Conditions: 150 mM KOAc, 10 mM MgCl2 and 150 mM bicine (pH 8.5), 24 C. Chemical mapping of a 177-nucleotide RNA with 2A3 and DMS. For DMS, 11,183 sequencing reads were counted. It was measured as part of the RMDB library OK2TST. High DMS reactivity at an A or C suggests that its Watson-Crick edge is free.
RNA sequence: GGGAACGACUCGAGUAGAGUCGAAAAGCUAAUGGUCGUCUGAUUGGUUUAGGAGAAGCUGUGGGUAUUAUAGCUGCUCAAUCCAUUGGUGAACCUGGAACACAGCUAACGAUGAGAACGUUCCACCGAGUAACAGAGUUUUCGAACUCUGUUACUCAAAAGAAACAACAACAACAAC
Reactivity to 2A3 in 0.01 (KOAc 150mM, MgCl2 10mM, bicine 150mM(pH8.5), 24C), signal-to-noise 9, nucleotides 027 to 126: g000c010u050a080a050u120g030g010u020c020g030u010c050u050g070a130u070u120g050g080u060u060u120a160g050g060a050g020a050a010g000c020u010g010u050g050g120g090u150a110u220u110a020u130a010g010c010u020g010c000u000c010a010a030u010c010c010a010u000u050g010g010u040g030a070a070c000c010u010g030g030a060a020c090a010c030a080g000c010u010a060a010c020g020a030u170g010a010g030a150a050c010g000u010u000c000c000a040c030c080
Reactivity to DMS in 0.01 (KOAc 150mM, MgCl2 10mM, bicine 150mM(pH8.5), 24C), signal-to-noise 8, nucleotides 027 to 126: g010c030u000a090a090u000g000g020u000c050g000u010c020u000g010a050u000u000g020g010u000u000u000a100g020g020a040g010a080a030g020c010u000g030u000g010g010g010u010a090u010u010a050u000a020g010c020u000g000c040u000c030a090a060u000c010c010a030u010u000g010g010u010g010a070a050c030c020u000g010g020a170a110c170a070c150a040g020c020u010a050a200c050g000a070u010g000a080g000a080a130c020g010u010u000c000c010a080c300c160